[RMDB]
RNA sequence: GGGAACGACUCGAGUAGAGUCGAAAAAGAUAUGGAAUGGUCCGAAAGAUGAACUACCAUCGGGAGGAAUCGGAAACGAUUCCUUCUCUAGCGUGUGGCAUCUAGUAGCUGACCAUUCCUAAGUCAACCAUUUAAUGUUGUUCGCAACAUUAAAUGGAAAAGAAACAACAACAACAAC
Reactivity to 2A3 in 0.01 (KOAc 150mM, MgCl2 10mM, bicine 150mM(pH8.5), 24C), signal-to-noise 5, nucleotides 027 to 126: a000g030a010u040a020u090g000g000a000a010u000g000g000u030c030c020g030a090a070a040g010a000u020g010a130a130c040u080a040c230c020a070u110c060g020g010g010a010g000g000a000a000u000c010g000g010a070a030a000c000g000a010u010u030c010c000u090u000c010u000c010u020a080g060c150g130u300g010u020g180g230c010a000u000c000u000a050g110u090a010g050c130u070g000a000c000c000a000u000u000c000c000u000a020a000g020u010c020a020a060
Reactivity to DMS in 0.01 (KOAc 150mM, MgCl2 10mM, bicine 150mM(pH8.5), 24C), signal-to-noise 7, nucleotides 027 to 126: a100g010a040u000a270u010g000g000a010a000u000g000g010u000c010c050g020a150a200a160g000a020u000g000a110a050c030u010a300c010c010a120u000c180g000g000g000a010g010g010a020a000u010c000g000g010a070a050a130c010g000a010u000u000c000c000u000u000c000u000c060u000a110g040c300g010u000g030u000g000g010c010a000u000c000u000a090g020u010a200g020c180u010g000a020c000c000a010u000u000c000c000u010a010a090g000u000c030a140a260

About this RNA: Chemical mapping of a 177-nucleotide RNA with 2A3 and DMS. The reactions ran in a buffer of 150 mM KOAc, 10 mM MgCl2 and 150 mM bicine (pH 8.5), at 24 C.